[RMDB]
Conditions: 150 mM KOAc, 10 mM MgCl2 and 150 mM bicine (pH 8.5), 24 C.
Structure probing data (DMS) for a 177-nucleotide construct.
RNA sequence: GGGAACGACUCGAGUAGAGUCGAAAAGGUUGGACUUAUCAGUUAGUGCAACGCAGCAUGAUGGUUCAGGCCAUUGAUAAUGGCUUGAUGGCACAAAGUUUGAUGGAUACCGGGCAGGUUACGCACCAAUGGCCAAUCACUUCGGUGAUUGGCCAUUAAAAGAAACAACAACAACAAC
Reactivity to DMS in 0.01 (KOAc 150mM, MgCl2 10mM, bicine 150mM(pH8.5), 24C), signal-to-noise 1, nucleotides 027 to 126: g000g000u000u000g010g000a050c030u000u000a100u000c100a100g000u010u010a070g010u000g000c050a080a050c100g000c060a120g030c060a050u000g000a170u000g000g000u000u000c010a050g010g000c000c000a000u000u010g010a130u020a100a040u010g000g000c010u010u000g000a010u000g010g060c030a060c070a090a000a100g000u000u000u000g010a030u000g000g020a090u020a010c040c060g000g000g000c080a090g000g000u000u000a080c170g010c130a150c100c040

It was measured as part of the RMDB library OK2TRN.